[RMDB]
An RNA of 207 nucleotides, treated with 2A3 and DMS and read out base by base. It was measured as part of the RMDB library ARCHII. For DMS the reverse transcriptase was MarathonRT.

RNA sequence: GGGAACGACUCGAGUAGAGUCGAAAAGAACAAUACGCUUUAGCAGCUUAAUAACCUGCAUUUAGCCUUCGCGCUCCAGCUUCCGCUCGUAAGACGGGGAUAACGCGGAGUCAAACCAAAACGAGAUCGUGUGGAAGCCACCGUUUGAGGAUCGAAGCCUAUUAACAGGCUUCGGCCUGUUAAUAGGAAAAGAAACAACAACAACAAC
Reactivity to 2A3 in 0.01 (KOAc 150mM, MgCl2 10mM, bicine 150mM(pH8.5), 24C), signal-to-noise 2, nucleotides 027 to 156: g060a140a000c020a010a070u170a150c070g000c030u040u090u010a030g000c010a010g010c010u070u000a030a010u020a070a050c000c000u030g050c050a300u100u070u000a010g000c010c000u020u010c010g000c000g010c030u010c010c000a020g000c060u050u030c010c020g030c040u040c050g100u060a090a020g060a040c010g000g000g000g020a010u050a110a020c030g000c000g040g000a000g030u030c000a040a030a100c040c030a010a080a030a010c030g030a020g000a100u120c030g000u060g000u010g140g060a030a040g010c000c020a070c010c080g040u040u080u160g060a050g000g030a030u120c030g030a040a010g030
Reactivity to DMS in 0.01 (KOAc 150mM, MgCl2 10mM, bicine 150mM(pH8.5), 24C), signal-to-noise 2, nucleotides 027 to 156: g010a100a130c060a100a110u020a100c080g020c020u000u000u000a100g040c000a020g040c010u000u000a150a130u030a140a100c200c020u000g000c020a160u020u000u000a090g010c020c010u000u000c010g020c010g000c020u000c020c020a090g030c040u010u000c000c010g030c070u010c070g020u000a120a140g010a110c030g000g010g050g000a120u000a050a070c050g010c020g020g000a050g050u000c000a000a050a150c040c120a070a040a080a130c050g000a120g020a070u000c050g020u000g000u000g000g010a100a060g020c030c050a040c050c040g000u000u000u000g020a150g000g010a150u000c020g000a030a080g000